[RMDB]
RNA sequence: GGGAACGACUCGAGUAGAGUCGAAAAGAUAUGGAUCCCGGAGGGAGGUAUAGGGAUCGGAAACGAUCCUCUGCGAACCUCCAGGGAUCCUAAGUCAAACGUGGCUAUUGUUCGCAAUAGCCACGAACAUCACUAGAGAGUUCGCUCUCUAGUGAUGAAAAGAAACAACAACAACAAC
Reactivity to DMS in 0.01 (KOAc 150mM, MgCl2 10mM, bicine 150mM(pH8.5), 24C), signal-to-noise 6, nucleotides 027 to 126: g010a030u000a300u010g000g000a010u000c000c000c000g000g000a040g000g010g010a110g010g020u000a030u000a100g000g000g010a000u000c000g010g010a080a080a160c010g000a010u000c010c000u000c130u000g010c030g010a100a300c000c000u000c000c000a060g010g000g010a010u000c000c000u000a010a060g000u000c020a090a100a270c020g030u000g000g000c000u000a000u000u000g000u000u010c190g020c000a010a000u000a000g010c000c000a000c010g000a040a120
Reactivity to 2A3 in 0.01 (KOAc 150mM, MgCl2 10mM, bicine 150mM(pH8.5), 24C), signal-to-noise 4, nucleotides 027 to 126: g020a000u050a030u110g000g000a000u020c000c020c020g000g020a030g030g070g020a210g190g020u130a120u210a200g070g030g010a010u010c020g000g000a060a050a010c010g000a000u010c000c030u070c030u030g010c040g100a170a150c000c010u000c010c000a010g000g010g000a000u010c000c000u000a010a010g020u010c040a010a070a130c030g000u000g000g000c000u010a010u010u020g060u090u110c300g000c190a010a010u000a000g000c000c000a010c000g000a000a000
This 177-nucleotide RNA was probed chemically with DMS and 2A3. For DMS, 9,395 sequencing reads were counted. The RNA was probed in 150 mM KOAc, 10 mM MgCl2 and 150 mM bicine (pH 8.5) at 24 C. Values cover nucleotides 27 to 126. For 2A3 the reverse transcriptase was SuperScript II with manganese. The 2A3 profile rests on 12,620 reads.